This 170-nucleotide RNA was probed chemically with DMS and 2A3.
RNA sequence: GGGAACGACUCGAGUAGAGUCGAAAAAGGAUUCCCCGAGACGCUGACGGAAACCCCGGGAACAAGGAAACAGGAGGAGGAUCGGUAGAAAAGAGCGAGACCUCCGAUUCGAGAGCUCCUGGACUCCACAGAAUGCCGUUCGCGGCAUUCAAAAGAAACAACAACAACAAC
Reactivity to DMS in 0.01 (KOAc 150mM, MgCl2 10mM, bicine 150mM(pH8.5), 24C), signal-to-noise 5, nucleotides 027 to 129: a050g040g020a300u010u020c010c010c020c050g010a080g040a080c060g030c050u000g010a060c160g000g000a030a120a150c050c050c010c000g000g050g000a060a040c150a050a130g000g010a090a080a180c070a080g020g010a110g000g050a070g070g010a110u020c030g060g050u070a050g030a050a040a070a060g030a120g010c130g020a140g000a130c140c030u100c020c010g010a030u000u000c050g030a140g000a090g020c030u020c000c010u020g030g000a110c070u000c030c000a070c110a160
Reactivity to 2A3 in 0.01 (KOAc 150mM, MgCl2 10mM, bicine 150mM(pH8.5), 24C), signal-to-noise 5, nucleotides 027 to 129: a000g140g020a110u040u030c000c010c000c010g030a010g000a010c010g010c070u040g020a020c020g060g000a060a030a030c000c010c000c020g010g000g010a030a050c050a080a060g020g010a040a050a020c030a010g000g010a010g010g010a020g000g000a010u020c010g020g030u090a020g110a050a060a050a010g110a030g040c080g030a030g060a120c020c020u000c000c000g010a000u020u020c020g020a060g000a050g140c000u000c010c010u020g000g030a020c030u000c000c000a020c000a070
Overview:
2A3 adducts were read by reverse transcription with SuperScript II with manganese. For 2A3, 10,061 sequencing reads were counted.